[RMDB]
RNA sequence: GGGAACGACUCGAGUAGAGUCGAAAACUUGAUUAAGUGGUUCAUUUGUCCAGCAUAGCUUUCCACUUUUCUUAGAACAUAAAGGUGGUAAGACAUCUAACAUAUCUAAUGAUGGCGGGUCGCAAUCUACUGUGACAAUCAUGGGUUUAAUAGAAGAAGAUACUCCAGUUUUCGAACUGGAGUAUCUAAAAGAAACAACAACAACAAC
Reactivity to 2A3 in 0.01 (KOAc 150mM, MgCl2 10mM, bicine 150mM(pH8.5), 24C), signal-to-noise 2, nucleotides 027 to 156: c010u060u150g030a010u060u160a120a060g020u080g070g000u060u060c020a090u140u050u090g050u070c100c000a000g020c020a070u090a060g010c000u050u000u000c000c000a050c000u000u040u060u000c010u050u110a140g030a190a060c030a080u130a050a050a000g000g000u000g000g000u020a000a010g010a040c030a060u000c020u030a040a090c000a160u080a050u140c030u100a150a050u080g040a040u020g040g030c060g010g070g000u010c050g000c040a040a030u030c010u090a060c020u120g070u070g060a020c040a030a040u030c020a020u060g000g070g000u040u050u150a110a220u110a040g040a110a020g000a010
Reactivity to DMS in 0.01 (KOAc 150mM, MgCl2 10mM, bicine 150mM(pH8.5), 24C), signal-to-noise 2, nucleotides 027 to 156: c040u000u000g030a150u000u010a080a150g030u000g010g020u000u000c040a140u010u000u000g000u000c050c010a070g010c030a070u000a130g040c020u000u000u000c010c010a050c030u010u000u000u000c060u010u010a110g000a160a080c120a130u000a050a110a040g000g060u000g000g000u000a050a160g010a050c020a010u000c010u000a060a150c090a130u000a070u010c050u000a080a120u000g010a040u010g010g020c050g000g030g000u000c070g010c050a040a030u000c050u000a080c040u010g030u000g010a070c070a060a070u000c080a050u000g000g010g000u000u000u010a020a090u000a130g010a050a110g000a230
Chemical mapping of a 207-nucleotide RNA with 2A3 and DMS.
Conditions: 150 mM KOAc, 10 mM MgCl2 and 150 mM bicine (pH 8.5), 24 C.
Values cover nucleotides 27 to 156.
Source: RMDB library OK3TST, as collected in RNAgym.